[RMDB]
RNA sequence: GGGAACGACUCGAGUAGAGUCGAAAAGAUAUGGACCGAACUACAGCCGCCCAGCAACAGCUCGGAAACGAGACAUGCUGUAACAAGCUGCGGUCCUAAGUCAAACAUCACGCUUCGGCGUGAUGAACGUGUGUAUUGAGUUCGCUCAAUACACACGAAAAGAAACAACAACAACAAC
Reactivity to DMS in 0.01 (KOAc 150mM, MgCl2 10mM, bicine 150mM(pH8.5), 24C), signal-to-noise 4, nucleotides 027 to 126: g000a040u010a300u010g000g020a030c020c020g020a050a030c060u000a300c000a020g000c010c030g000c300c200c020a060g000c000a050a100c250a090g000c000u000c000g000g010a070a070a140c010g020a020g000a050c110a120u000g000c010u000g010u020a070a120c220a170a060g020c010u020g000c000g000g010u000c000c010u000a010a070g000u000c030a060a080a220c010a000u000c000a000c000g020c000u000u020c200g020g020c000g020u000g000a010u000g010a060a050
Reactivity to 2A3 in 0.01 (KOAc 150mM, MgCl2 10mM, bicine 150mM(pH8.5), 24C), signal-to-noise 4, nucleotides 027 to 126: g020a030u070a040u110g010g000a000c010c010g040a110a060c170u210a070c300a010g010c010c030g040c050c030c020a000g040c000a010a120c030a160g050c000u000c000g000g040a070a040a010c020g000a000g040a020c020a110u090g020c000u040g070u210a120a110c100a130a040g000c010u020g020c000g000g000u020c000c000u000a060a000g040u020c040a080a000a090c000a010u010c000a000c000g010c000u060u140c300g130g000c000g000u000g010a000u000g010a030a020
The record gives the reactivity of an RNA of 177 nucleotides to DMS and 2A3. Conditions: 150 mM KOAc, 10 mM MgCl2 and 150 mM bicine (pH 8.5), 24 C. DMS adducts were read by reverse transcription with MarathonRT. As a SHAPE reagent, 2A3 marks flexible, mostly unpaired nucleotides at the ribose 2'-OH. High DMS reactivity at an A or C suggests that its Watson-Crick edge is free.